Structure probing data (DMS and 2A3) for a 207-nucleotide construct. The RNA was probed in 150 mM KOAc, 10 mM MgCl2 and 150 mM bicine (pH 8.5) at 24 C. Source: RMDB library OK3TST, as collected in RNAgym. 2A3 adducts were read by reverse transcription with SuperScript II with manganese. For 2A3, 1,780 sequencing reads were counted.

[RMDB]
RNA sequence: GGGAACGACUCGAGUAGAGUCGAAAAAGUAGCAGUUAGUUUUUAAAGGUAGGGAAAGGUUUUCCAAUGGAACAUGUACAAAGGCUUGGAAGCUUGUCACAGACCAACUUCGUGAGAAACUCCAGGAGGUGCAUUAAGAUUGGAGUAGAGAGGCGUGAAUAGAGGACUAGUUCGCUAGUCCUCUAUUAAAAGAAACAACAACAACAAC
Reactivity to DMS in 0.01 (KOAc 150mM, MgCl2 10mM, bicine 150mM(pH8.5), 24C), signal-to-noise 3, nucleotides 027 to 156: a120g010u010a060g020c030a090g020u000u000a070g000u010u010u020u010u040a060a090a040g020g010u010a050g010g020g010a030a050a110g020g000u000u000u000u000c030c040a060a060u000g020g010a080a090c130a050u000g020u000a070c030a080a060a100g010g000c040u010u000g010g000a080a090g030c030u000u010g010u000c010a080c040a180g010a110c090c050a080a100c120u000u000c030g010u000g010a000g000a070a010a050c000u000c030c010a080g030g020a070g020g010u000g000c030a030u000u000a020a090g000a130u000u010g010g010a080g020u000a050g010a120g000a050g020g030c040g030u000g010
Reactivity to 2A3 in 0.01 (KOAc 150mM, MgCl2 10mM, bicine 150mM(pH8.5), 24C), signal-to-noise 3, nucleotides 027 to 156: a010g070u080a000g030c070a000g020u010u060a020g000u040u110u130u160u220a130a150a030g030g000u030a030g020g030g000a020a050a030g030g000u050u030u140u020c020c010a030a010u050g000g020a070a020c030a060u080g020u100a000c040a060a140a060g080g010c020u010u020g010g000a050a040g020c040u040u050g050u080c030a020c030a070g050a060c070c010a010a080c040u140u120c040g050u030g010a030g050a050a070a020c010u000c020c020a010g040g000a030g100g000u030g020c010a000u060u030a010a020g010a050u010u080g020g000a020g000u070a010g020a000g010a010g040g010c020g010u050g040